[RMDB]
Conditions: 150 mM KOAc, 10 mM MgCl2 and 150 mM bicine (pH 8.5), 24 C. An RNA of 207 nucleotides, treated with DMS and 2A3 and read out base by base. 2A3 adducts were read by reverse transcription with SuperScript II with manganese. The 2A3 profile rests on 4,876 reads. For DMS the reverse transcriptase was MarathonRT.
RNA sequence: GGGAACGACUCGAGUAGAGUCGAAAACCGUAGGUCUACAGAGACAGCGAGGUCUAAGACAGAGGGUUUCGAAAGAGACCCUUCGAGACCUCGAACUACUGUUGAUGUAGACCUAAACGGAAAGCUGUUAGGAUUGGUUCGCCAAUCCUAACAGCAACUGGUAAUAUUGGUUCGCCAAUAUUACCAGAAAAGAAACAACAACAACAAC
Reactivity to DMS in 0.01 (KOAc 150mM, MgCl2 10mM, bicine 150mM(pH8.5), 24C), signal-to-noise 2, nucleotides 027 to 156: c000c000g030u000a000g000g010u000c000u000a030c020a000g020a300g010a010c030a040g010c020g020a020g040g010u000c000u010a170a210g020a140c300a100g000a050g000g010g020u000u000u000c000g010a170a110a230g010a040g020a020c000c000c000u000u000c000g000a020g000a020c000c050u020c000g000a060a140c000u010a080c000u010g030u010u000g000a300u000g000u000a020g000a010c020c000u010a000a010a080c020g010g060a130a110a140g000c010u000g010u010u000a000g000g020a020u000u010g010g000u000u000c300g010c020c000a000a010u000c010c010u000a010a020c000a010g000c020a010a010
Reactivity to 2A3 in 0.01 (KOAc 150mM, MgCl2 10mM, bicine 150mM(pH8.5), 24C), signal-to-noise 2, nucleotides 027 to 156: c010c000g010u010a010g000g000u000c000u000a000c000a000g020a000g010a040c010a010g020c000g000a000g010g010u000c010u120a250a040g050a080c080a040g040a040g030g000g000u010u000u000c010g020a040a020a010g010a010g010a010c030c060c010u010u000c000g000a000g000a000c000c000u010c010g000a020a000c040u270a030c000u040g010u000u010g010a010u010g000u020a020g010a000c000c010u000a010a000a000c000g010g030a160a070a030g010c000u000g000u010u010a010g000g010a010u010u010g000g040u070u120c210g010c100c000a000a000u020c000c000u000a000a000c000a000g010c000a000a000